This 177-nucleotide RNA was probed chemically with 2A3 and DMS. The 2A3 profile rests on 1,785 reads. The reactions ran in a buffer of 150 mM KOAc, 10 mM MgCl2 and 150 mM bicine (pH 8.5), at 24 C. For DMS, 689 sequencing reads were counted. For DMS the reverse transcriptase was MarathonRT.

[RMDB]
RNA sequence: GGGAACGACUCGAGUAGAGUCGAAAAGAUAUGGACGAUGAACUACUUCCGCCCUCGCACUCGGAAACGAGUGAACUACGAGUAACAAGAAGCAUCGUCCUAAGUCAAAGGGUUCUUCGGAACCCAAGACCCCCUUUUAGUUCGCUAAAAGGGGGUCAAAAGAAACAACAACAACAAC
Reactivity to 2A3 in 0.01 (KOAc 150mM, MgCl2 10mM, bicine 150mM(pH8.5), 24C), signal-to-noise 1, nucleotides 027 to 126: g060a000u050a000u070g000g000a000c000g020a000u020g010a110a100c150u080a080c030u300u030c050c070g150c170c080c000u010c000g080c000a000c010u000c010g030g040a020a050a020c010g020a000g000u030g000a040a030c080u200a050c030g000a010g020u090a240a110c140a290a140g010a010a000g000c000a010u010c000g000u000c000c000u010a050a010g010u000c040a130a000a130g030g000g020u000u000c000u020u060c250g150g000a010a010c000c000c000a000a000
Reactivity to DMS in 0.01 (KOAc 150mM, MgCl2 10mM, bicine 150mM(pH8.5), 24C), signal-to-noise 1, nucleotides 027 to 126: g000a080u030a300u010g000g000a060c020g000a020u070g000a140a080c170u000a300c000u000u010c000c000g010c300c250c030u000c000g000c000a010c000u030c000g010g000a060a090a210c000g010a000g010u000g000a000a030c160u000a270c050g000a020g000u000a130a060c200a220a190g000a000a050g000c000a000u000c000g000u010c000c000u000a050a070g010u000c060a170a090a130g020g000g000u000u000c000u000u000c300g050g010a000a010c000c000c000a010a090